[RMDB]
This 177-nucleotide RNA was probed chemically with DMS and 2A3. For DMS, 2,038 sequencing reads were counted. For DMS the reverse transcriptase was MarathonRT. The reactions ran in a buffer of 150 mM KOAc, 10 mM MgCl2 and 150 mM bicine (pH 8.5), at 24 C. Source: RMDB library OK2TRN, as collected in RNAgym.

RNA sequence: GGGAACGACUCGAGUAGAGUCGAAAAAGAGGAGCCACAGGUCCUGAAGGCUGCCCAGCUCAGCCUCCCCACCCAACCUGGGCUCUGAGGACCUGGCUUGGGAGGUGCUGCUCUUGGCAGCCCCAGCUCACCGUACUAACUUCGGUUAGUACGGUGAAAAAGAAACAACAACAACAAC
Reactivity to DMS in 0.01 (KOAc 150mM, MgCl2 10mM, bicine 150mM(pH8.5), 24C), signal-to-noise 2, nucleotides 027 to 126: a090g010a120g000g000a000g030c000c040a130c100a030g000g000u000c050c030u000g010a120a090g000g000c140u000g000c010c020c080a040g000c170u000c150a070g010c030c030u000c000c010c030c040a160c090c020c060a090a120c240c040u000g020g000g020c040u000c040u010g000a090g000g010a040c020c010u000g020g010c060u000u000g000g000g010a150g000g010u010g030c000u000g000c000u000c140u020u000g000g020c030a050g000c020c010c010c040a120g000c150
Reactivity to 2A3 in 0.01 (KOAc 150mM, MgCl2 10mM, bicine 150mM(pH8.5), 24C), signal-to-noise 1, nucleotides 027 to 126: a000g140a030g050g020a010g010c020c010a130c030a090g030g020u040c010c040u060g070a090a040g020g070c060u010g000c010c110c000a000g000c050u090c050a020g000c000c000u050c030c010c010c000a030c000c000c000a050a080c000c000u020g010g000g050c000u000c020u040g030a070g020g020a020c010c020u010g030g010c010u050u070g060g010g000a100g000g030u030g030c010u000g000c000u040c080u170u110g050g000c010a010g050c020c010c000c000a000g040c010